An RNA of 177 nucleotides, treated with DMS and 2A3 and read out base by base. For DMS, 21,106 sequencing reads were counted. The data come from the RNA Mapping Database (RMDB), library M2PK50. Conditions: 150 mM KOAc, 10 mM MgCl2 and 150 mM bicine (pH 8.5), 24 C. For 2A3, 32,264 sequencing reads were counted. For 2A3 the reverse transcriptase was SuperScript II with manganese.
RNA sequence: GGGAACGACUCGAGUAGAGUCGAAAAGUAAGAUGAUUCGUCAUCUUACGAACCCGAUGAAGCGGCACAUACGGAGCUUCAUACAUCUAAGAGUGCAAAUAAUGGCGCGUGGUUUCGACCACGCGAAGAAUAAACAUGGUUUCGACCAUGUUUAUUCAAAAGAAACAACAACAACAAC
Reactivity to DMS in 0.01 (KOAc 150mM, MgCl2 10mM, bicine 150mM(pH8.5), 24C), signal-to-noise 9, nucleotides 027 to 126: g000u000a000a000g010a010u000g000a020u000u010c200g020u000c000a000u000c000u000u000a000c000g010a070a120c010c000c010g010a040u000g000a020a020g010c010g010g010c030a040c040a090u010a110c100g010g010a170g010c010u000u000c010a020u000a090c150a070u010c140u000a090a080g010a080g010u000g010c020a160a090a100u010a080a090u010g010g010c010g020c000g020u000g000g010u000u000u010c190g010a020c000c000a000c000g010c000g010a010a030
Reactivity to 2A3 in 0.01 (KOAc 150mM, MgCl2 10mM, bicine 150mM(pH8.5), 24C), signal-to-noise 9, nucleotides 027 to 126: g000u000a000a000g000a010u010g000a000u020u080c110g060u010c080a000u000c000u000u000a000c000g000a020a030c000c010c010g000a040u040g000a010a010g000c030g070g030c080a030c020a100u270a090c130g210g040a030g020c000u000u010c000a010u050a040c050a070u060c050u130a110a040g110a050g080u050g030c050a050a060a090u270a100a130u240g230g010c010g000c000g000u000g010g010u030u040u120c190g020a020c010c000a000c000g000c000g000a000a010